[RMDB]
RNA sequence: GGGAACGACUCGAGUAGAGUCGAAAACGGCAUCGAUAUAUGCGCGCGCGCGCCGAUCGCGUACGUAAUUAGCCGAUGCCGCGAUCGUAGCCGUAUAUAUAAUGCUAAUAUCGUAGCAUGCGCCGUACUACCCCCACUUAUUCGUAAGUGGGGGUAGAAAAGAAACAACAACAACAAC
Reactivity to DMS in 0.01 (KOAc 150mM, MgCl2 10mM, bicine 150mM(pH8.5), 24C), signal-to-noise 4, nucleotides 027 to 126: c010g010g000c000a100u010c080g010a050u000a040u000a030u000g010c030g030c150g020c020g010c110g010c100g010c200c070g000a040u000c010g030c010g030u000a050c030g010u000a050a150u000u020a110g000c180c060g000a030u000g010c180c000g000c000g000a050u000c030g020u000a090g020c010c020g010u010a030u010a050u000a070u010a100a050u000g010c010u010a070a100u010a080u010c130g010u000a030g010c050a050u010g000c110g000c000c030g000u000a250
Reactivity to 2A3 in 0.01 (KOAc 150mM, MgCl2 10mM, bicine 150mM(pH8.5), 24C), signal-to-noise 3, nucleotides 027 to 126: c010g010g000c000a040u050c090g090a000u030a000u000a010u100g010c030g000c010g030c000g000c000g010c060g010c060c060g040a050u050c000g010c010g020u040a020c030g020u040a170a270u150u150a090g110c080c000g010a030u060g040c020c020g010c010g000a020u020c020g000u040a040g040c070c030g060u020a010u000a000u010a010u010a050a170u070g000c020u030a060a040u080a070u250c120g070u030a010g030c020a040u050g030c070g000c050c020g020u000a070